[RMDB]
RNA sequence: GGGAACGACUCGAGUAGAGUCGAAAAUCACAACAACUCCAUCUUGAAUAGGGGCUGGGUAAAAUAAGGGUGAGACCUACUGGGCUGCAUUCUCAGGAUGUCUGUCAGUCAUUCUAAGUCACAGGAUGAGAUAGGAGGUGGGCACAAGAUACUGAUCCUGAUAAUAAAGUUUCGACUUUAUUAUCAGAAAAGAAACAACAACAACAAC
Reactivity to 2A3 in 0.01 (KOAc 150mM, MgCl2 10mM, bicine 150mM(pH8.5), 24C), signal-to-noise 4, nucleotides 027 to 156: u070c020a020c030a150a000c030a050a030c080u000c020c030a080u030c070u080u150g100a170a120u070a200g030g010g050g000c070u050g010g020g040u070a010a070a060a110u120a070a030g050g020g020u030g050a050g020a010c000c030u030a040c060u060g000g030g000c020u040g010c040a040u120u000c050u010c030a020g030g020a020u060g020u040c040u020g120u070c030a020g040u010c010a020u070u000c040u080a090a070g040u070c030a030c030a100g040g020a040u030g020a020g020a070u070a040g010g020a030g030g040u030g050g010g000c040a020c000a050a040g020a070u140a090c040u050g010a030u020c010
Reactivity to DMS in 0.01 (KOAc 150mM, MgCl2 10mM, bicine 150mM(pH8.5), 24C), signal-to-noise 1, nucleotides 027 to 156: u010c050a180c060a090a140c040a060a110c030u010c020c030a080u000c050u000u020g010a080a130u000a100g020g010g000g010c030u010g020g030g020u010a030a060a110a100u000a040a090g010g010g020u010g000a140g010a080c020c020u000a090c050u020g020g020g010c040u010g010c040a070u000u000c010u000c040a050g010g000a100u000g010u000c030u000g030u010c110a090g030u000c030a000u000u000c050u010a050a100g030u010c110a130c080a050g020g000a160u020g020a040g010a130u000a090g020g010a080g010g010u000g010g020g020c030a170c060a060a040g000a160u000a070c050u020g010a100u000c020